[RMDB]
RNA sequence: GGGAACGACUCGAGUAGAGUCGAAAACGAUCUGUUCGCAGAUCGAGCUACGGAGACGUAGCAAAGCGAGCGAGGGCACGGGCGCUCGCACUACCGGAACUCAAACCAUAUCCACGUGUGCUAGGAUAUGGCCGUGCCCAAAGGACCAGCACACGAAACUCAUACUAUAUUUCGAUAUAGUAUGAGUAAAAGAAACAACAACAACAAC
Reactivity to 2A3 in 0.01 (KOAc 150mM, MgCl2 10mM, bicine 150mM(pH8.5), 24C), signal-to-noise 9, nucleotides 027 to 156: c010g000a000u000c000u010g050u090u100c250g010c090a000g000a000u000c000g010a030g000c000u000a000c000g020g030a080g030a070c010g000u010a010g000c010a020a080a000g000c000g000a000g000c000g000a020g000g010g000c000a000c000g020g030g000c020g010c010u000c010g020c010a000c010u100a060c010c040g090g080a110a060c050u070c190a110a060a100c010c000a020u010a010u020c020c010a050c120g010u010g000u010g000c010u030a050g000g010a010u010a010u020g000g000c000c000g010u000g010c000c010c000a080a100a020g080g020a050c030c060a010g000c000a000c000a000c010g030a100a050
Reactivity to DMS in 0.01 (KOAc 150mM, MgCl2 10mM, bicine 150mM(pH8.5), 24C), signal-to-noise 3, nucleotides 027 to 156: c020g020a030u000c000u010g020u000u010c250g040c020a020g010a010u000c000g020a070g020c010u000a030c000g000g010a290g000a300c010g070u010a030g030c000a030a050a060g000c000g010a030g010c010g020a140g000g020g000c040a050c040g010g000g010c030g000c010u000c010g000c010a020c030u000a300c030c020g000g000a080a060c050u010c060a080a070a080c020c020a030u000a020u000c000c000a050c040g040u000g030u010g030c030u000a180g010g000a030u000a030u000g000g040c000c050g000u000g010c000c020c060a030a100a090g030g010a140c100c060a030g000c010a020c000a030c010g000a060a110